[RMDB]
RNA sequence: GGGAACGACUCGAGUAGAGUCGAAAAAGCGAACCCGUAUGAGUUACAUGCAGCACAUAUUUCCUCGUUCAGAGUGGUGGUAGAGGUAAGAAGAUUCGCACAAAUAACGAUCACCUCCGCGCUUCCAGUCGCUCGUGGAUUUCGAUCCACGAGCGACAAAAGAAACAACAACAACAAC
Reactivity to 2A3 in 0.01 (KOAc 150mM, MgCl2 10mM, bicine 150mM(pH8.5), 24C), signal-to-noise 1, nucleotides 027 to 126: a000g080c080g010a020a000c080c000c020g000u020a110u160g160a120g000u060u140a230c030a010u060g080c000a000g000c010a100c000a010u020a230u000u000u050c000c010u020c080g170u130u090c030a030g140a020g170u090g000g090u100g000g040u050a000g000a000g000g000u090a060a060g050a090a000g070a070u160u270c010g000c130a000c020a160a050a080u020a020a000c090g040a040u010c000a000c000c000u020c020c000g040c020g000c000u070u040c060c060a080
Chemical mapping of a 177-nucleotide RNA with 2A3. 2A3 adducts were read by reverse transcription with SuperScript II with manganese. For 2A3, 422 sequencing reads were counted. Reactivities are given for positions 27 through 126.